RNA sequence: GGGAACGACUCGAGUAGAGUCGAAAACAUCGCAGCACCGCCGUGAGUUCGACGCCAGCCUAUUUGCCCAACAUCACGGAGCACGUCCAGGCCACCACACCGCCGGAACUGAAUGUGGUGCAGAGUCCCAAUCGGUACGGUUCGCCGUACCGAUUGGAAAAGAAACAACAACAACAAC
Reactivity to DMS in 0.01 (KOAc 150mM, MgCl2 10mM, bicine 150mM(pH8.5), 24C), signal-to-noise 2, nucleotides 027 to 126: c110a080u010c140g040c110a040g010c040a030c030c030g020c030c060g000u010g010a030g000u000u010c120g030a110c110g060c010c080a070g030c050c030u010a070u000u000u010g020c010c010c010a120a110c080a070u020c070a110c070g020g020a090g000c060a050c140g000u010c070c000a130g010g040c050c060a050c080c080a000c060a040c030c060g000c050c040g010g000a020a060c090u010g010a080a100u010g010u000g010g010u000g000c080a130g000a130g000u040c050
Reactivity to 2A3 in 0.01 (KOAc 150mM, MgCl2 10mM, bicine 150mM(pH8.5), 24C), signal-to-noise 2, nucleotides 027 to 126: c000a040u140c080g020c090a040g030c000a030c010c020g010c000c000g020u000g060a050g030u060u110c070g020a040c040g050c000c000a020g020c050c000u170a180u090u170u100g030c030c000c000a020a030c040a100u090c030a010c080g040g000a040g040c020a010c030g040u000c000c030a020g010g030c020c000a040c000c000a070c020a020c010c030g000c010c040g010g010a050a050c030u040g060a130a080u130g020u080g040g000u020g000c000a010g030a020g060u060c060